[RMDB]
RNA sequence: GGGAACGACUCGAGUAGAGUCGAAAACAUUUUGCGCGUUGCUGGUAGAGACUACAUUCAAUCUUGUCUCUUUGUUGGAAAAAGGGUUUUCCUUGUGAACAAACAUGCAAUUGACUCAGUUGAACAAACCACUGUAAGUUUUCGAACUUACAGUGGUAAAAGAAACAACAACAACAAC
Reactivity to DMS in 0.01 (KOAc 150mM, MgCl2 10mM, bicine 150mM(pH8.5), 24C), signal-to-noise 6, nucleotides 027 to 126: c050a120u000u000u010u000g020c100g010c100g010u000u000g010c010u000g010g030u000a050g000a080g020a020c010u000a070c200a130u020u010c240a070a090u010c140u010u000g010u010c010u010c030u000u000u000g000u000u000g010g000a040a050a070a040a030g000g010g020u010u000u010u010c010c010u000u000g000u010g010a080a090c050a050a050a100c070a050u000g010c020a020a050u000u000g010a100c040u000c060a070g010u000u000g010a070a130c160a080a110
Reactivity to 2A3 in 0.01 (KOAc 150mM, MgCl2 10mM, bicine 150mM(pH8.5), 24C), signal-to-noise 3, nucleotides 027 to 126: c000a020u090u100u080u210g050c060g000c050g040u030u030g010c010u040g080g050u050a010g000a010g010a010c020u060a030c070a130u180u190c060a090a120u050c060u080u080g000u000c010u000c000u020u020u010g020u000u010g040g040a080a030a030a030a060g130g030g030u080u050u150u220c010c000u020u040g080u040g040a060a030c010a040a090a000c020a020u130g000c000a030a050u080u130g030a070c010u020c080a050g010u040u060g090a070a020c050a050a120
Overview:
The record gives the reactivity of an RNA of 177 nucleotides to DMS and 2A3. For 2A3, 3,291 sequencing reads were counted. DMS (dimethyl sulfate) methylates the pairing face of unpaired adenines and cytosines. 2A3 adducts were read by reverse transcription with SuperScript II with manganese. It was measured as part of the RMDB library OK2TRN. For DMS the reverse transcriptase was MarathonRT.